An RNA of 207 nucleotides, treated with 2A3 and read out base by base. For 2A3, 1,063 sequencing reads were counted. For 2A3 the reverse transcriptase was SuperScript II with manganese. The RNA was probed in 150 mM KOAc, 10 mM MgCl2 and 150 mM bicine (pH 8.5) at 24 C. The data come from the RNA Mapping Database (RMDB), library OK3TST.

RNA sequence: GGGAACGACUCGAGUAGAGUCGAAAAGCAGGCGCAUGGAGCGUUCGAUGACCUGCACGCGAGGUUCAGCACGGAUGAGUAGCCUUGAACUGCAAUCAGCAGUAAGAGGUUAUCCCCAUGAACACAUGGUGGCAAAAUAAUAUGGAAGCCUAUAUUGGCAUCCAUAUCACUUCGGUGAUAUGGAUGCAAAAGAAACAACAACAACAAC
Reactivity to 2A3 in 0.01 (KOAc 150mM, MgCl2 10mM, bicine 150mM(pH8.5), 24C), signal-to-noise 2, nucleotides 027 to 156: g010c000a010g030g010c020g020c120a020u120g080g030a050g070c100g020u070u070c030g010a070u070g020a020c000c000u030g010c040a040c040g060c090g020a100g000g050u030u070c020a010g010c050a080c050g040g030a040u120g040a050g070u050a000g000c000c000u010u000g020a040a030c000u010g010c020a060a300u290c070a220g020c000a000g000u060a120a000g000a000g000g000u000u020a000u050c000c000c000c000a010u000g060a120a010c060a010c030a110u030g010g040u080g000g000c000a000a070a000a130u170a010a030u100a120u060g030g010a000a100g000c000c030u030a040u000a020u060u170g060